Conditions: 150 mM KOAc, 10 mM MgCl2 and 150 mM bicine (pH 8.5), 24 C.
This 177-nucleotide RNA was probed chemically with 2A3 and DMS.
The data come from the RNA Mapping Database (RMDB), library OK2TST.
For DMS, 1,451 sequencing reads were counted.
Values cover nucleotides 27 to 126.
2A3 adducts were read by reverse transcription with SuperScript II with manganese.
RNA sequence: GGGAACGACUCGAGUAGAGUCGAAAAACAGCGAGCUCAAGUUCGUGGUGGACCUCUGCACCGAGAGGCACUUCGAUGCUCUGGCCAUCGGUGAUAUAGGAUGAAGUCGGCUUGAGGAAGAAGAAUGCAAGCAUGUGCAGUUCGCUGCACAUGCUUGAAAAGAAACAACAACAACAAC
Reactivity to 2A3 in 0.01 (KOAc 150mM, MgCl2 10mM, bicine 150mM(pH8.5), 24C), signal-to-noise 2, nucleotides 027 to 126: a000c040a010g020c030g090a050g020c000u030c030a030a050g030u180u230c060g020u090g050g050u060g060g040a050c000c000u000c000u030g000c040a010c060c010g100a030g030a100g060g000c020a070c040u170u130c050g180a170u120g030c000u000c070u110g060g030c030c050a020u010c050g000g000u000g050a040u010a020u080a140g040g030a030u100g080a050a050g090u090c010g040g010c040u010u020g010a030g080g000a000a080g020a030a020g060a030a050u170g020
Reactivity to DMS in 0.01 (KOAc 150mM, MgCl2 10mM, bicine 150mM(pH8.5), 24C), signal-to-noise 2, nucleotides 027 to 126: a080c110a130g000c060g010a070g000c030u000c060a100a070g000u000u000c040g010u000g030g020u000g000g010a170c020c030u000c040u000g000c080a010c030c010g000a010g030a060g020g000c040a040c040u010u010c110g010a040u020g000c030u000c040u000g020g010c000c020a210u010c000g020g010u000g000a060u030a030u010a050g010g000a150u010g020a170a100g020u000c060g010g010c050u000u000g000a040g000g000a110a130g000a070a080g000a080a100u010g010